This 177-nucleotide RNA was probed chemically with DMS and 2A3. It was measured as part of the RMDB library OK2TRN. For 2A3, 6,767 sequencing reads were counted. The reactions ran in a buffer of 150 mM KOAc, 10 mM MgCl2 and 150 mM bicine (pH 8.5), at 24 C.
[RMDB]
RNA sequence: GGGAACGACUCGAGUAGAGUCGAAAAGAGGAGCUCCAGAUGGCUAAGGCCUUGGAAACACGUGUUGAGCUUUGUCAUUCAGCCUGGGAGGAAGGGAGUGAUUAUCUCCAGGUGCCUCUGGGAGGAAGUAACCAAAGUGAUUCGUCACUUUGGUUACAAAAGAAACAACAACAACAAC
Reactivity to DMS in 0.01 (KOAc 150mM, MgCl2 10mM, bicine 150mM(pH8.5), 24C), signal-to-noise 7, nucleotides 027 to 126: g010a090g000g000a100g010c040u000c020c030a130g000a070u010g010g010c030u010a090a090g020g020c020c020u000u000g020g000a090a170a120c080a080c160g010u010g020u000u000g000a100g010c050u000u000u010g010u000c080a150u000u000c040a070g020c020c020u000g010g020g000a040g010g010a110a140g010g000g000a040g000u000g000a170u010u010a090u000c010u000c010c010a090g010g010u010g010c030c010u000c010u010g010g000g010a050g000g010a070a100
Reactivity to 2A3 in 0.01 (KOAc 150mM, MgCl2 10mM, bicine 150mM(pH8.5), 24C), signal-to-noise 5, nucleotides 027 to 126: g070a020g050g010a020g000c010u030c020c000a030g030a200u100g030g000c060u090a070a130g080g010c010c000u030u070g070g030a040a110a020c080a020c110g120u120g070u110u090g020a010g000c000u080u050u070g100u060c030a080u100u030c030a020g050c000c000u100g070g030g030a050g020g030a010a050g070g010g020a030g010u040g050a160u100u260a060u100c020u000c000c010a050g150g070u090g090c020c000u000c030u020g000g010g020a030g040g020a100a060